The record gives the reactivity of an RNA of 177 nucleotides to DMS and 2A3.

[RMDB]
RNA sequence: GGGAACGACUCGAGUAGAGUCGAAAACUGGAUCCAGGGCAGAAGUUGGUUCAUCGUAGCCAAUGAUUUCUGGGUCAAUCAUCAUAGCACGCGCCAAAGCCACCCGCUGCUUUUGCCCACCAGAUAGCAAAUAUGCGGAAUUCGUUCCGCAUAUUUGAAAAGAAACAACAACAACAAC
Reactivity to DMS in 0.01 (KOAc 150mM, MgCl2 10mM, bicine 150mM(pH8.5), 24C), signal-to-noise 6, nucleotides 027 to 126: c030u000g030g000a090u010c030c030a040g010g010g020c250a060g010a080a140g010u000u000g000g000u010u000c050a130u000c300g020u010a030g010c000c010a020a020u000g000a200u000u010u000c020u000g000g020g020u000c030a090a050u000c120a080u010c070a080u000a080g000c040a050c090g010c070g010c030c050a060a070a150g000c030c050a070c050c020c050g020c060u000g000c030u000u010u000u010g020c010c020c010a100c110c080a070g000a090u010a130g000
Reactivity to 2A3 in 0.01 (KOAc 150mM, MgCl2 10mM, bicine 150mM(pH8.5), 24C), signal-to-noise 4, nucleotides 027 to 126: c040u060g120g010a000u030c020c030a040g000g040g020c060a050g020a270a030g060u040u040g030g000u030u010c030a200u140c300g130u210a000g000c010c000a030a040u120g050a040u020u060u040c030u050g010g010g040u040c000a000a060u060c020a010u030c010a010u050a100g020c010a000c090g040c020g030c030c000a070a080a020g010c000c000a030c030c020c020g030c060u040g040c040u040u050u070u050g010c020c010c000a030c030c020a040g060a160u110a020g030
The DMS profile rests on 5,995 reads. The RNA was probed in 150 mM KOAc, 10 mM MgCl2 and 150 mM bicine (pH 8.5) at 24 C. DMS adducts were read by reverse transcription with MarathonRT.